Structure probing data (DMS and 2A3) for a 177-nucleotide construct. The reactions ran in a buffer of 150 mM KOAc, 10 mM MgCl2 and 150 mM bicine (pH 8.5), at 24 C. The 2A3 profile rests on 3,250 reads. For DMS the reverse transcriptase was MarathonRT. 2A3 adducts were read by reverse transcription with SuperScript II with manganese. Source: RMDB library M2PK90, as collected in RNAgym.

[RMDB]
RNA sequence: GGGAACGACUCGAGUAGAGUCGAAAAAAAAAGACCCAAGACACCCUUGGCAGAUGACGUCCUCGUUGGUGGGUGUCGGUAAUGUUGUCAGUCACAGGCAACAGUUAACGAUCUGCCUUACAAAAAACAUACCAGAAAUGUUCGCAUUUCUGGUAUGAAAAGAAACAACAACAACAAC
Reactivity to DMS in 0.01 (KOAc 150mM, MgCl2 10mM, bicine 150mM(pH8.5), 24C), signal-to-noise 3, nucleotides 027 to 126: a060a060a060a080a080g020a100c030c030c020a110a080g000a040c030a030c020c000c010u010u010g010g010c010a020g000a010u000g010a030c040g000u010c100c150u000c070g030u010u000g010g000u010g000g000g020u000g000u000c000g030g010u000a060a050u000g000u000u010g020u000c010a060g020u010c260a120c300a130g000g000c000a000a020c000a030g010u010u000a090a040c090g000a020u000c020u000g010c010c000u010u000a030c110a000a040a090a030a030a050
Reactivity to 2A3 in 0.01 (KOAc 150mM, MgCl2 10mM, bicine 150mM(pH8.5), 24C), signal-to-noise 2, nucleotides 027 to 126: a000a000a000a000a000g100a030c000c020c000a010a010g020a010c000a010c020c010c000u030u110g010g000c000a010g000a020u020g030a010c040g110u120c000c100u080c070g150u100u140g100g070u080g000g000g000u020g000u010c030g000g010u070a070a030u030g010u020u000g000u010c030a050g110u140c060a090c060a130g020g000c010a020a000c000a000g030u020u070a080a020c030g020a030u000c000u010g000c000c000u000u110a030c060a020a090a020a020a010a000